Source: RMDB library OK1LIB, as collected in RNAgym. This 177-nucleotide RNA was probed chemically with 2A3. The RNA was probed in 150 mM KOAc, 10 mM MgCl2 and 150 mM bicine (pH 8.5) at 24 C. For 2A3 the reverse transcriptase was SuperScript II with manganese.

RNA sequence: GGGAACGACUCGAGUAGAGUCGAAAACAUGACACAUUUUCUUGAAGAGAUUAGCUAAUCAUCCCCAGGAUUUUCGAGCAUUUAUCAUAUAUCUUCUUUAAUAGAAAUGGAUAAUAAUCAUAUAGGGAGGUGCACAACAUUUCGAUGUUGUGCACCUAAAAGAAACAACAACAACAAC
Reactivity to 2A3 in 0.01 (KOAc 150mM, MgCl2 10mM, bicine 150mM(pH8.5), 24C), signal-to-noise 1, nucleotides 027 to 126: c050a220u190g120a060c030a000c000a030u030u010u020u120c000u050u030g080a060a000g160a000g000a030u130u300a170g000c020u000a000a000u020c030a020u000c000c000c000c000a120g000g080a190u040u060u060u060c020g120a020g010c000a190u070u080u080a200u300c020a050u030a000u000a050u220c000u160u000c000u000u140u000a200a160u080a110g000a030a000a000u050g000g090a000u000a060a000u120a080a080u030c000a000u110a000u000a300g300g000g000